[RMDB]
RNA sequence: GGGAACGACUCGAGUAGAGUCGAAAAGUAAUAGAUAACUGGAUGCAGCGUAGGGGGCAACGCAUAUCCAGUACGAAUGGUACCUGUAAAUAAAAUAUGUUUCCUAGUACAAGUACCAACAGAAGGAUAAGCGAUGGUGAUGUCAAUCACAUUUGCAGUACUCCUGACGUUUCGACGUCAGGAGUACAAAAGAAACAACAACAACAAC
Reactivity to 2A3 in 0.01 (KOAc 150mM, MgCl2 10mM, bicine 150mM(pH8.5), 24C), signal-to-noise 3, nucleotides 027 to 156: g050u100a040a080u080a100g110a060u100a110a090c000u010g020g000a010u010g030c090a070g000c130g010u070a120g010g000g000g000g000c020a000a000c010g000c000a010u030a000u100c000c000a000g020u000a000c000g020a040a060u040g000g000u000a020c020c010u010g020u030a000a090a100u120a030a070a110a060u170a030u080g080u000u070u040c000c000u040a010g000u000a000c010a020a010g000u000a010c030c000a010a030c020a010g160a130a020g060g000a060u070a080a060g020c030g060a040u030g040g100u050g010a030u020g050u160c110a120a040u060c000a020c030a070u010u040u210g000c010a010
Conditions: 150 mM KOAc, 10 mM MgCl2 and 150 mM bicine (pH 8.5), 24 C. The record gives the reactivity of an RNA of 207 nucleotides to 2A3. The 2A3 profile rests on 1,590 reads. The data come from the RNA Mapping Database (RMDB), library OK3TST.